This 207-nucleotide RNA was probed chemically with DMS and 2A3.
RNA sequence: GGGAACGACUCGAGUAGAGUCGAAAAUGAGUCCUGCCGAUUUAAUACUGGUUUUGAAUAACCUAUAUCGGUGGGCCACAAUUGACGGCGUAUGGGAUCCUAGGGCCCAUUCUGUGUACCUCAAGUAUCGUAAGUUGCUGCCUAAACAGCUGCAACGGGUAUGAAGACAGUUCGCUGUCUUCAUACCAAAAGAAACAACAACAACAAC
Reactivity to DMS in 0.01 (KOAc 150mM, MgCl2 10mM, bicine 150mM(pH8.5), 24C), signal-to-noise 2, nucleotides 027 to 156: u010g000a230g000u000c000c000u020g020c000c000g010a060u010u020u020a130a090u000a090c060u010g000g030u000u010u000u000g040a300a180u000a030a010c010c000u000a070u000a090u010c000g020g100u000g020g010g030c050c130a050c030a060a080u000u000g010a250c040g050g000c000g010u010a040u000g060g000g000a020u000c060c010u020a150g050g000g000c060c000c030a050u010u010c020u040g030u000g000u010a070c070c020u000c020a010a090g040u000a060u000c050g000u020a070a150g040u000u000g030c010u020g000c000c020u000a060a080a140c160a090g010c010u000g010c040a030a130c120g010
Reactivity to 2A3 in 0.01 (KOAc 150mM, MgCl2 10mM, bicine 150mM(pH8.5), 24C), signal-to-noise 4, nucleotides 027 to 156: u080g010a020g060u120c000c000u000g000c010c000g010a010u020u050u160a230a090u160a200c150u120g010g030u020u030u050u110g260a240a170u150a080a010c010c000u030a040u000a010u070c000g000g000u020g000g000g000c000c010a060c020a020a110u050u140g050a030c030g010g070c020g030u050a020u030g000g010g040a050u120c040c140u110a110g050g080g020c010c010c010a010u060u030c040u080g060u010g030u070a060c010c020u020c040a050a080g070u060a080u220c070g060u070a100a060g010u010u000g010c000u020g000c000c000u020a080a060a000c010a030g000c000u010g010c000a010a010c000g000
In probing experiments dimethyl sulfate is read out at A N1 and C N3, which are open when not base-paired. Source: RMDB library PDB130, as collected in RNAgym. Values cover nucleotides 27 to 156. The DMS profile rests on 2,425 reads. For 2A3, 2,213 sequencing reads were counted.